[RMDB]
RNA sequence: GGGAACGACUCGAGUAGAGUCGAAAACUUGCUGAGGGACUUUCCUCCCGCGCUCAGUUGUUUCUUCUUGUUCUCGAGGGCCUUCCUUCUUCGGUGAUCCUUCCUCUCCCUGUCGGUGAAGUCUCCCAUAACUUCAAGUUCGCUUGAAGUAAAAGAAACAACAACAACAAC
Reactivity to 2A3 in 0.01 (KOAc 150mM, MgCl2 10mM, bicine 150mM(pH8.5), 24C), signal-to-noise 9, nucleotides 027 to 129: c040u060u170g010c030u060g050a110g030g020g020a100c030u090u100u070c020c010u040c000c010c010g060c010g030c030u100c090a050g010u010u010g010u010u020u000c000u030u000c010u040u100g070u110u020c020u010c020g020a090g010g040g030c010c010u040u050c010c000u030u050c010u040u030c020g080g020u060g040a090u040c010c000u030u030c000c000u010c000u020c000c010c000u040g070u070c040g010g010u040g040a040a020g020u000c020u010c030c010c000a030u090a060
Reactivity to DMS in 0.01 (KOAc 150mM, MgCl2 10mM, bicine 150mM(pH8.5), 24C), signal-to-noise 9, nucleotides 027 to 129: c080u030u040g030c060u020g030a150g000g000g000a110c100u010u010u020c060c090u010c030c030c040g020c140g020c080u040c120a050g000u000u000g000u010u010u000c010u000u010c090u010u000g010u030u020c000u020c050g020a090g010g020g000c040c040u010u010c020c030u000u000c020u000u020c040g020g000u030g030a070u010c010c030u000u000c000c000u010c010u020c020c020c030u030g010u020c010g000g000u020g030a090a100g000u000c050u010c020c010c020a080u030a090
Structure probing data (2A3 and DMS) for a 170-nucleotide construct.
Values cover nucleotides 27 to 129.
Conditions: 150 mM KOAc, 10 mM MgCl2 and 150 mM bicine (pH 8.5), 24 C.
For 2A3, 106,211 sequencing reads were counted.
It was measured as part of the RMDB library 15KLIB.